Chemical mapping of a 177-nucleotide RNA with DMS and 2A3. For DMS the reverse transcriptase was MarathonRT. The DMS profile rests on 86,039 reads. For 2A3 the reverse transcriptase was SuperScript II with manganese. DMS (dimethyl sulfate) methylates the pairing face of unpaired adenines and cytosines. The RNA was probed in 150 mM KOAc, 10 mM MgCl2 and 150 mM bicine (pH 8.5) at 24 C. The data come from the RNA Mapping Database (RMDB), library OK1LIB.
RNA sequence: GGGAACGACUCGAGUAGAGUCGAAAAGCUGGCCUGCGCACGAUCUGACUGCCGUGAAGUCUAGCCUGCGUCAGAACUAGUCUCCAUCAAUCAAAGCGCAGGGAUUGAUGUACGAGACUAGUACACAGUGAUAGGAGUUGUUCGCAGCUCUUAUCACAAAAGAAACAACAACAACAAC
Reactivity to DMS in 0.01 (KOAc 150mM, MgCl2 10mM, bicine 150mM(pH8.5), 24C), signal-to-noise 9, nucleotides 027 to 126: g010c040u010g000g000c000c000u000g000c040g030c030a160c120g000a070u010c050u000g000a050c040u000g010c050c040g000u010g000a070a060g010u010c030u010a100g000c030c010u000g010c070g010u020c080a080g010a090a030c000u000a000g000u000c000u000c000c010a010u000c000a000a000u000c000a060a070a090g010c020g010c030a030g010g000g000a000u000u000g000a010u000g010u070a100c190g000a010g010a010c000u000a000g010u000a050c140a100c190a130
Reactivity to 2A3 in 0.01 (KOAc 150mM, MgCl2 10mM, bicine 150mM(pH8.5), 24C), signal-to-noise 9, nucleotides 027 to 126: g030c030u040g000g020c000c010u010g010c010g000c010a040c050g060a090u040c030u050g050a030c020u030g030c030c030g060u060g060a070a010g030u010c030u050a020g010c000c010u030g010c020g090u080c060a040g030a090a010c000u000a000g000u000c000u000c000c000a000u000c000a000a000u000c010a040a070a050g040c030g000c020a010g010g000g000a000u000u000g000a000u000g030u060a070c100g000a000g000a000c000u000a000g000u050a010c070a000c010a030